An RNA of 207 nucleotides, treated with 2A3 and DMS and read out base by base. For DMS, 9,699 sequencing reads were counted. Values are in units of 0.01, from 0 to 300, in steps of 10. DMS adducts were read by reverse transcription with MarathonRT.
RNA sequence: GGGAACGACUCGAGUAGAGUCGAAAAGUAGGCUUAUGCGGCACGCUUUCGUUUCCACCGUGGCUACUGCGCUUUGGGAAGGCCACGACCUCCUCCUUUGGGGAGGUCCUUAGGAUCUCAGCUUGGCAGUCGAGUGGGUGGCGACCUUUUAAAGGAAUCAGUUAAAUAUGUUCGCAUAUUUAACUGAAAAAGAAACAACAACAACAAC
Reactivity to 2A3 in 0.01 (KOAc 150mM, MgCl2 10mM, bicine 150mM(pH8.5), 24C), signal-to-noise 5, nucleotides 027 to 156: g060u100a060g090g040c040u130u090a060u300g080c090g020g000c040a010c080g030c010u010u080u060c040g010u010u090u010c010c020a020c010c020g080u110g080g000c020u050a010c020u050g020c050g020c040u080u080u080g030g010g020a060a020g140g050c000c000a010c010g000a000c000c000u000c000c000u020c020c080u120u190u300g010g000g000g000a000g000g010u020c000c000u050u110a040g000g020a020u020c010u000c020a020g010c040u060u110g040g000c020a030g000u020c020g030a030g050u110g020g020g020u020g010g000c010g010a050c000c000u050u160u060u240a130a100a000g070g000a040a080
Reactivity to DMS in 0.01 (KOAc 150mM, MgCl2 10mM, bicine 150mM(pH8.5), 24C), signal-to-noise 3, nucleotides 027 to 156: g000u000a050g010g010c030u000u010a070u000g010c040g020g010c010a040c060g020c030u000u000u000c030g000u000u010u000c010c000a060c060c010g020u000g030g010c030u000a030c020u000g020c280g020c020u000u010u000g020g000g010a060a090g010g010c020c020a110c090g010a010c000c000u000c020c000u010c020c270u000u010u010g040g000g010g010a020g050g020u000c000c020u000u000a120g010g010a170u000c010u000c030a060g000c040u000u000g030g020c040a050g020u000c040g000a080g020u020g010g000g010u010g020g010c020g010a060c010c010u000u000u000u010a050a100a080g020g000a230a300